[RMDB]
RNA sequence: GGGAACGACUCGAGUAGAGUCGAAAACGAUGCCGCCGAAGUCGAGUUCGUCGAGUGCUCGGAUCACUUCGCUCGACGGGAUGCCGCGAUAGAAGGGUGCCGCGUUCGGUCCGGUGCCCGUCGACGGCUAGCCCUAGUUCUUCGGAACUAGGGCUAGAAAAGAAACAACAACAACAAC
Reactivity to 2A3 in 0.01 (KOAc 150mM, MgCl2 10mM, bicine 150mM(pH8.5), 24C), signal-to-noise 2, nucleotides 027 to 126: c030g050a070u160g000c000c000g070c000c020g060a070a000g020u070c020g010a000g050u050u230c090g030u080c030g030a010g050u030g020c090u070c060g070g030a150u130c040a030c130u110u090c050g010c020u010c020g020a010c000g000g020g040a070u110g020c040c000g040c020g040a010u010a060g170a130a170g040g010g020u050g010c010c000g070c050g010u180u140c070g030g170u030c040c000g010g010u000g000c000c020c000g000u010c000g010a100c020g010g030
Reactivity to DMS in 0.01 (KOAc 150mM, MgCl2 10mM, bicine 150mM(pH8.5), 24C), signal-to-noise 2, nucleotides 027 to 126: c070g020a090u000g010c040c020g020c060c020g030a070a090g000u000c020g000a140g010u000u000c020g000u010c100g000a050g010u000g000c140u010c110g010g000a140u000c150a070c050u010u000c010g010c100u000c000g000a040c000g040g000g010a070u000g010c060c050g010c080g010a050u000a110g020a080a090g010g000g000u000g000c000c000g000c100g000u010u000c200g000g010u000c080c000g000g010u000g000c000c000c010g000u000c000g020a080c040g010g000
The record gives the reactivity of an RNA of 177 nucleotides to 2A3 and DMS.
The reactions ran in a buffer of 150 mM KOAc, 10 mM MgCl2 and 150 mM bicine (pH 8.5), at 24 C.
For 2A3, 1,870 sequencing reads were counted.
Reactivities are given for positions 27 through 126.